Structure probing data (DMS and 2A3) for a 177-nucleotide construct. 2A3 adducts were read by reverse transcription with SuperScript II with manganese. The RNA was probed in 150 mM KOAc, 10 mM MgCl2 and 150 mM bicine (pH 8.5) at 24 C. Source: RMDB library TTRDES, as collected in RNAgym. Reactivities are given for positions 27 through 126.

RNA sequence: GGGAACGACUCGAGUAGAGUCGAAAAGAUAUGGAAUAUGAAAGGGAGCUGACCAUCGGAAACGAUGGGUAGCUUUGAUCUUUAUAUUCCUAAGUCAAAGUGGGUACAAGUUCGCUUGUACCCACAACUAUAGGUACAACUUCGGUUGUACCUAUAGAAAAGAAACAACAACAACAAC
Reactivity to DMS in 0.01 (KOAc 150mM, MgCl2 10mM, bicine 150mM(pH8.5), 24C), signal-to-noise 5, nucleotides 027 to 126: g000a030u000a200u010g000g010a020a020u000a010u000g010a020a010a050g030g000g010a030g020c000u000g010a060c000c000a000u000c000g020g000a050a040a090c000g020a010u000g000g000g000u000a010g020c000u000u010u010g000a120u010c020u000u000u000a020u000a010u010u000c000c000u010a020a130g000u000c010a110a120a150g020u000g000g000g010u000a000c010a010a020g010u010u020c300g020c010u000u000g010u010a000c000c000c000a000c010a000a070
Reactivity to 2A3 in 0.01 (KOAc 150mM, MgCl2 10mM, bicine 150mM(pH8.5), 24C), signal-to-noise 4, nucleotides 027 to 126: g010a010u030a020u060g000g010a000a010u020a020u070g240a150a030a060g070g110g070a080g020c000u010g040a050c010c010a010u000c010g000g020a030a030a010c010g000a000u000g020g000g000u010a000g000c000u100u140u210g010a010u000c010u000u030u020a020u010a000u010u010c000c000u000a050a000g010u020c050a180a090a060g000u000g000g010g020u000a000c000a010a000g010u020u150c300g100c220u000u000g000u000a000c010c000c000a000c000a000a000